[RMDB]
RNA sequence: GGGAACGACUCGAGUAGAGUCGAAAAGAUAUGGAGGUGGUGCCGUCAACAGCCCAUCUGGGUCGGAAACGACCCUGGGACAUGACGUCUCACCUCCUAAGUCAAAACAUACCGUUCGCGGUAUGAACCCCUAGAUACACUUCGGUGUAUCUAGGGGAAAAGAAACAACAACAACAAC
Reactivity to DMS in 0.01 (KOAc 150mM, MgCl2 10mM, bicine 150mM(pH8.5), 24C), signal-to-noise 2, nucleotides 027 to 126: g010a010u000a300u020g020g010a020g000g000u000g000g000u000g000c030c020g010u000c010a020a050c300a300g000c030c000c000a110u000c290u010g000g010g010u000c000g000g030a080a050a110c000g020a000c000c000c000u000g000g010g000a040c060a300u000g010a030c020g020u010c010u000c010a000c010c000u000c000c000u000a000a020g000u000c000a090a100a150a280c000a000u000a020c010c000g040u000u020c300g030c010g010g000u000a000u000g000a120a150
Reactivity to 2A3 in 0.01 (KOAc 150mM, MgCl2 10mM, bicine 150mM(pH8.5), 24C), signal-to-noise 2, nucleotides 027 to 126: g030a010u050a010u100g000g000a010g020g030u020g050g180u130g110c100c030g000u000c020a140a130c030a220g060c000c000c000a040u120c230u050g000g000g020u040c000g000g030a080a050a010c010g000a000c000c020c020u010g000g000g040a030c110a300u300g000a010c030g010u020c000u000c010a010c000c000u000c000c000u000a000a000g000u000c000a000a020a050a060c000a000u010a000c020c010g040u030u090c300g000c010g090g010u010a010u000g020a040a050

Structure probing data (DMS and 2A3) for a 177-nucleotide construct. For 2A3, 3,594 sequencing reads were counted.